RNA sequence: GGGAACGACUCGAGUAGAGUCGAAAAAGAAGCUCAAAUUCAGAAAUGCUAGAGAUGCUCGGAUGGCACGAGAAGUGUUCGGCGAUGAUGAAGUAAUGCGAGAGAAUUUUGGUGAGGCAUAUACUAACAGACUCUUUUGCUUCGGCAAAAGAGUCUGAAAAGAAACAACAACAACAAC
Reactivity to DMS in 0.01 (KOAc 150mM, MgCl2 10mM, bicine 150mM(pH8.5), 24C), signal-to-noise 1, nucleotides 027 to 126: a110g060a000a150g020c090u000c000a070a210a170u020u010c060a080g000a070a010a150u010g060c040u040a020g000a070g000a100u000g020c000u040c040g000g000a130u030g000g000c150a040c030g000a160g000a070a060g000u000g000u050u000c000g000g000c080g000a030u010g030a130u010g000a070a120g000u020a130a080u030g010c110g000a170g040a080g000a000a060u000u000u000u050g000g000u000g000a030g000g000c040a040u000a030u000a070c170u030a030a090
Reactivity to 2A3 in 0.01 (KOAc 150mM, MgCl2 10mM, bicine 150mM(pH8.5), 24C), signal-to-noise 1, nucleotides 027 to 126: a000g100a000a000g060c010u010c170a110a050a000u180u090c000a050g070a050a080a000u010g000c040u070a000g020a000g010a000u060g010c000u000c000g100g000a010u150g040g060c030a000c050g090a000g150a200a000g000u040g000u000u210c000g000g170c000g060a150u110g020a110u000g020a010a010g020u060a130a130u180g070c060g020a000g000a000g000a000a120u020u100u080u300g070g000u090g020a050g070g000c090a050u040a040u040a060c060u050a000a150